[RMDB]
RNA sequence: GGGAACGACUCGAGUAGAGUCGAAAAGAUAUGGAUCCUGCAUGGAGAUGCUCGGAAACGAGGACAUCUAUGAAGUGCUGGAUCCUAAGUCAAAAUCCGGCUAGAGUGUUCGCACUCUAGCCGGAAACACAAAGUUACACUUCGGUGUAACUUUGUGAAAAGAAACAACAACAACAAC
Reactivity to DMS in 0.01 (KOAc 150mM, MgCl2 10mM, bicine 150mM(pH8.5), 24C), signal-to-noise 2, nucleotides 027 to 126: g010a030u010a300u000g000g010a020u000c000c000u000g010c010a020u000g000g000a020g000a010u000g020c010u000c000g010g000a090a100a160c010g000a030g020g000a100c000a010u000c000u000a280u020g010a160a200g000u000g000c000u010g000g000a020u000c010c010u020a000a040g000u010c040a130a090a120a130u000c010c000g000g000c000u010a000g000a010g040u000g010u000u010c230g030c030a010c000u010c000u000a010g010c000c010g000g000a000a020a070
Reactivity to 2A3 in 0.01 (KOAc 150mM, MgCl2 10mM, bicine 150mM(pH8.5), 24C), signal-to-noise 2, nucleotides 027 to 126: g030a020u040a010u120g000g000a010u000c000c030u050g000c000a020u040g050g000a000g000a000u010g000c000u000c020g030g040a050a060a060c010g000a030g050g180a120c000a020u000c000u080a300u180g160a120a000g000u000g000c010u030g000g000a000u000c000c000u000a010a010g000u010c010a020a020a030a250u020c000c000g000g000c010u000a020g020a000g000u060g070u150u250c300g090c100a000c000u020c030u000a010g010c000c010g000g000a000a000a020
Notes:
An RNA of 177 nucleotides, treated with DMS and 2A3 and read out base by base. Reactivities are given for positions 27 through 126. The RNA was probed in 150 mM KOAc, 10 mM MgCl2 and 150 mM bicine (pH 8.5) at 24 C.